[RMDB]
An RNA of 177 nucleotides, treated with DMS and 2A3 and read out base by base. For DMS, 780 sequencing reads were counted. The data come from the RNA Mapping Database (RMDB), library M2PK50. In probing experiments dimethyl sulfate is read out at A N1 and C N3, which are open when not base-paired. The reactions ran in a buffer of 150 mM KOAc, 10 mM MgCl2 and 150 mM bicine (pH 8.5), at 24 C.
RNA sequence: GGGAACGACUCGAGUAGAGUCGAAAAUCCUAACGCUUCGGCGUUAGGAAAAGUUAAUUGGCAGAUUAACAUGUUAGAAUAAGAAUCUAACUAGUCUAAAAAAAACUGCGUGGUUCGCCACGCAGAACCAGAAUUGAAUGUUCGCAUUCAAUUCUGGAAAAGAAACAACAACAACAAC
Reactivity to DMS in 0.01 (KOAc 150mM, MgCl2 10mM, bicine 150mM(pH8.5), 24C), signal-to-noise 1, nucleotides 027 to 126: u000c000c000u000a000a000c010g000c000u010u010c190g080g040c020g010u000u000a000g000g000a040a010a070a090g000u000u000a020a000u050u000g000g010c130a140g030a060u000u000a000a020c010a150u000g000u000u000a000g010a080a110u010a140a130g010a240a190u000c000u000a000a010c020u020a140g010u010c050u000a000a000a000a120a070a120a080a160c000u000g030c020g060u000g000g000u000u050c290g010c000c000a010c000g000c000a000g000a050a080
Reactivity to 2A3 in 0.01 (KOAc 150mM, MgCl2 10mM, bicine 150mM(pH8.5), 24C), signal-to-noise 2, nucleotides 027 to 126: u000c010c000u010a010a000c000g010c000u050u090c190g200g000c010g000u010u000a020g000g000a010a070a000a030g010u010u050a020a050u040u040g190g030c080a020g030a190u040u050a030a010c020a080u060g030u000u000a010g010a030a010u130a230a110g040a080a030u070c000u010a010a010c000u020a020g070u060c060u140a060a010a020a010a010a020a070a120c000u000g000c020g000u000g000g070u020u090c200g020c060c010a000c010g000c000a000g000a000a030